This 207-nucleotide RNA was probed chemically with DMS and 2A3.

RNA sequence: GGGAACGACUCGAGUAGAGUCGAAAAGUAUGUUCUACUUAUGUGACUAGCCAUAAGUGAUGAUAAGACUCGUUAUCAUCAGAACAUAGAAUACUCAGUGCGUACUGGCUAGUCACAGUACGACUGAUGACGAGUCUCAUCAGUCACUGAGUAGAAGCGUAUGUUGCUAGUUCGCUAGCAACAUACGAAAAGAAACAACAACAACAAC
Reactivity to DMS in 0.01 (KOAc 150mM, MgCl2 10mM, bicine 150mM(pH8.5), 24C), signal-to-noise 2, nucleotides 027 to 156: g020u010a030u000g010u000u010c010u000a040c030u000u000a070u000g000u000g080a030c010u000a010g000c090c020a040u000a040a100g010u010g020a040u000g000a050u000a030a060g010a090c080u000c090g000u030u000a030u000c010a010u000c000a080g020a070a110c080a060u010a170g010a120a190u010a080c090u010c020a110g000u000g030c080g040u010a090c120u020g020g020c030u000a040g000u000c010a050c000a020g030u000a010c060g020a060c000u000g010a010u010g000a020c040g010a100g020u000c070u000c010a020u010c020a040g010u010c000a080c060u010g000a040g030u000a020g020a060a070g000
Reactivity to 2A3 in 0.01 (KOAc 150mM, MgCl2 10mM, bicine 150mM(pH8.5), 24C), signal-to-noise 2, nucleotides 027 to 156: g030u040a030u060g030u000u010c000u000a010c010u020u030a040u060g000u000g010a000c000u000a000g000c000c000a040u050a080a030g090u010g010a000u000g000a000u000a020a020g010a010c010u010c020g020u000u000a010u000c000a000u000c040a000g020a050a010c010a030u170a030g110a100a010u100a080c030u040c110a030g060u020g150c040g020u070a040c030u020g000g000c000u010a000g000u000c000a000c000a000g000u010a010c030g000a000c000u020g000a000u000g010a000c000g000a000g000u000c000u000c000a000u000c000a000g000u000c000a000c000u000g000a000g000u010a010g000a030a000g050
Reactivities are given for positions 27 through 156.
The DMS profile rests on 4,298 reads.
The RNA was probed in 150 mM KOAc, 10 mM MgCl2 and 150 mM bicine (pH 8.5) at 24 C.